[RMDB]
RNA sequence: GGGAACGACUCGAGUAGAGUCGAAAAGGGGCUCCACGCGCACUACAAUGAGUGGUGGUGCUAUAAGUAGUAGCCAGUCGUAGUUGGGAUUGACAUAUGUAAUUAUGUCAUGAACGUGGAAUUCCUAUCUUAAUAGAAAAUUCGUUUUCUAUUAAGAAAAAGAAACAACAACAACAAC
Reactivity to 2A3 in 0.01 (KOAc 150mM, MgCl2 10mM, bicine 150mM(pH8.5), 24C), signal-to-noise 9, nucleotides 027 to 126: g010g000g000g000c000u000c010c000a000c000g060c000g040c010a010c010u030a010c030a080a190u270g010a050g080u020g030g020u040g030g170u120g000c000u040a060u030a250a070g090u060a000g000u010a010g020c000c020a030g100u030c020g000u010a020g010u050u130g060g010g030a060u010u030g000a000c000a000u020a010u060g110u130a130a180u260u010a020u000g000u020c000a000u020g050a020a030c010g000u000g000g000a010a010u030u020c000c000u000a040
Reactivity to DMS in 0.01 (KOAc 150mM, MgCl2 10mM, bicine 150mM(pH8.5), 24C), signal-to-noise 9, nucleotides 027 to 126: g010g000g000g000c070u000c000c000a010c000g010c240g020c070a060c010u000a010c010a140a090u040g000a040g000u000g000g010u000g000g020u040g010c000u000a050u020a090a120g030u000a030g010u010a300g000c000c000a040g010u000c010g000u000a040g010u010u010g010g010g010a110u010u000g000a010c000a000u000a010u000g010u030a080a080u020u000a000u000g000u000c010a010u000g000a140a170c010g010u000g000g000a030a040u000u000c000c000u000a100